Conditions: 150 mM KOAc, 10 mM MgCl2 and 150 mM bicine (pH 8.5), 24 C. The record gives the reactivity of an RNA of 177 nucleotides to 2A3 and DMS.

RNA sequence: GGGAACGACUCGAGUAGAGUCGAAAAUCGGACGAUCGGGUAUCACAGUGAGCGCCCUCGGCCUCGGGUGCUGGCCCAUGGGAGGCGUGGCCUACCGGGACGAGAAACCCGACGGCUACGCCGGUGCCAUAUUGGGUGGGUUCGCCCACCCAAUAUGAAAAGAAACAACAACAACAAC
Reactivity to 2A3 in 0.01 (KOAc 150mM, MgCl2 10mM, bicine 150mM(pH8.5), 24C), signal-to-noise 3, nucleotides 027 to 126: u080c010g030g030a040c040g040a050u110c070g020g030g030u060a070u120c060a040c040a150g140u110g160a040g040c040g020c030c000c020u010c030g040g010c000c000u020c010g030g000g010u030g000c040u050g060g010c020c000c010a050u070g070g050g020a100g000g010c030g000u010g020g010c000c010u030a040c040c040g010g000g030a120c120g070a040g220a210a040a020c000c000c000g000a010c010g000g000c000u000a000c010g000c000c000g020g010u050g050c020
Reactivity to DMS in 0.01 (KOAc 150mM, MgCl2 10mM, bicine 150mM(pH8.5), 24C), signal-to-noise 6, nucleotides 027 to 126: u010c080g010g000a090c050g010a070u000c110g020g000g010u000a080u000c090a090c130a130g010u010g010a050g010c080g010c030c020c040u010c110g020g000c050c010u000c080g010g010g010u000g000c120u010g000g010c010c010c040a110u000g020g010g000a170g010g000c000g010u000g000g000c010c000u000a140c270c010g000g010g000a070c070g000a170g010a090a130a070c010c000c000g020a110c300g000g000c010u000a010c010g010c000c010g020g020u010g020c140
For 2A3 the reverse transcriptase was SuperScript II with manganese. Source: RMDB library OK2TST, as collected in RNAgym. For DMS the reverse transcriptase was MarathonRT. The DMS profile rests on 7,992 reads. Values are in units of 0.01, from 0 to 300, in steps of 10.